Source: RMDB library M2PK50, as collected in RNAgym. An RNA of 177 nucleotides, treated with DMS and 2A3 and read out base by base. For DMS, 3,251 sequencing reads were counted. The 2A3 profile rests on 19,112 reads. 2A3 adducts were read by reverse transcription with SuperScript II with manganese. DMS adducts were read by reverse transcription with MarathonRT. Conditions: 150 mM KOAc, 10 mM MgCl2 and 150 mM bicine (pH 8.5), 24 C.
[RMDB]
RNA sequence: GGGAACGACUCGAGUAGAGUCGAAAACUUUGAACGUUCGCGUUCAAAGAAACCUCUAAGCAGAUUGGCGAGGACGACGCUGCGGAGCGCGUUUCCCAAUAAAAAGCGUAGGCUUCGGCCUACGCAAGUCUGUUACUAUGUUCGCAUAGUAACAGACAAAAGAAACAACAACAACAAC
Reactivity to DMS in 0.01 (KOAc 150mM, MgCl2 10mM, bicine 150mM(pH8.5), 24C), signal-to-noise 4, nucleotides 027 to 126: c000u000u020u010g010a020a000c010g040u010u010c260g010c000g020u020u000c000a000a010a010g010a050a100a110c050c030u000c060u000a110a210g010c080a130g010a120u000u020g030g040c090g010a100g000g030a300c030g000a030c010g020c000u000g000c020g000g000a020g000c060g020c010g000u000u010u000c000c000c070a050a090u020a040a070a050a130a090g000c000g000u000a000g000g010c000u010u000c220g010g000c010c000u000a000c000g010c000a010a020
Reactivity to 2A3 in 0.01 (KOAc 150mM, MgCl2 10mM, bicine 150mM(pH8.5), 24C), signal-to-noise 9, nucleotides 027 to 126: c000u010u010u010g000a000a000c000g010u040u050c250g010c000g080u000u000c020a000a000a000g000a080a020a000c020c000u000c030u090a170a100g030c050a070g080a300u270u300g160g030c030g010a000g000g010a040c010g000a000c010g010c030u070g030c010g050g010a010g000c300g000c010g040u010u070u050c000c000c000a030a030u110a040a050a010a020a010g000c000g000u000a000g010g000c010u030u040c220g080g000c000c000u000a000c000g000c000a000a000